An RNA of 177 nucleotides, treated with DMS and read out base by base. Conditions: 150 mM KOAc, 10 mM MgCl2 and 150 mM bicine (pH 8.5), 24 C. For DMS, 957 sequencing reads were counted. For DMS the reverse transcriptase was MarathonRT.
RNA sequence: GGGAACGACUCGAGUAGAGUCGAAAAGAUAUGGAAUGCGUAUUGUCAGCUCUGUGGUCGGAAACGACCAUGGAGCUUGGAUUUAUACGCCACUUCCUAAGUCAAAAGUAAGGCUUCGGCCUUACAACAUGUCGAGUCUGUUCGCAGACUCGACAUGAAAAGAAACAACAACAACAAC
Reactivity to DMS in 0.01 (KOAc 150mM, MgCl2 10mM, bicine 150mM(pH8.5), 24C), signal-to-noise 1, nucleotides 027 to 126: g020a040u010a300u000g000g010a010a010u000g010c000g000u010a000u000u000g020u010c010a080g010c000u000c020u010g050u000g010g010u000c000g010g000a080a110a300c010g000a030c030c000a010u000g000g010a010g000c010u000u010g000g030a030u020u000u000a010u000a010c040g000c000c120a070c090u000u000c010c000u030a060a220g010u010c060a060a080a100a220g000u020a010a050g010g010c000u000u010c300g020g010c000c010u000u030a000c000a060a130